Structure probing data (DMS and 2A3) for a 207-nucleotide construct. 2A3 adducts were read by reverse transcription with SuperScript II with manganese. The data come from the RNA Mapping Database (RMDB), library M2RFPK. DMS adducts were read by reverse transcription with MarathonRT. High DMS reactivity at an A or C suggests that its Watson-Crick edge is free. The reactions ran in a buffer of 150 mM KOAc, 10 mM MgCl2 and 150 mM bicine (pH 8.5), at 24 C.

[RMDB]
RNA sequence: GGGAACGACUCGAGUAGAGUCGAAAAUGAAGCAAAUCCAUAAUUGCCAUUGAUGAGCAAUUCGCUAUUGCCGCCUAAAAACGGUUAGCCGGGGCUGCUAGAGCCUUGUUACCAAAGAUAGCCGGCGUUACGGCAUGAUGGUUCGCCAUCAUGCCAACACUGUUUAAUACUUCGGUAUUAAACAGUGAAAAGAAACAACAACAACAAC
Reactivity to DMS in 0.01 (KOAc 150mM, MgCl2 10mM, bicine 150mM(pH8.5), 24C), signal-to-noise 2, nucleotides 027 to 156: u000g000a100a090g020c040a060a060a130u000c020c060a100u000a050a060u000u000g000c000c040a300u000u000g010a130u000g020a150g030c010a010a050u010u000c040g040c010u010a050u000u000g030c000c000g020c000c040u000a050a060a060a100a060c030g000g010u000u010a030g040c010c050g030g030g020g020c010u000g000c070u000a070g010a070g020c010c020u000u000g000u000u000a160c120c040a070a050a090g020a160u000a060g030c030c060g000g020c030g000u000u000a060c090g010g010c000a010u010g000a030u000g020g010u000u000c300g000c040c000a020u000c000a010u000g030c000c000a020a050
Reactivity to 2A3 in 0.01 (KOAc 150mM, MgCl2 10mM, bicine 150mM(pH8.5), 24C), signal-to-noise 6, nucleotides 027 to 156: u140g040a050a010g030c040a040a050a080u050c040c010a040u090a140a050u060u020g010c010c020a090u070u240g100a160u120g030a180g030c010a010a020u080u070c030g010c040u070a070u090u200g000c010c000g010c000c020u080a070a040a010a010a020c040g000g020u060u040a020g020c040c030g020g000g000g010c020u060g010c080u110a060g040a010g210c000c000u010u030g030u040u070a050c000c020a090a000a050g080a040u050a030g060c040c020g040g000c020g050u100u120a060c100g000g000c000a000u000g000a000u000g010g030u030u050c120g020c050c000a000u000c000a000u000g000c000c000a000a000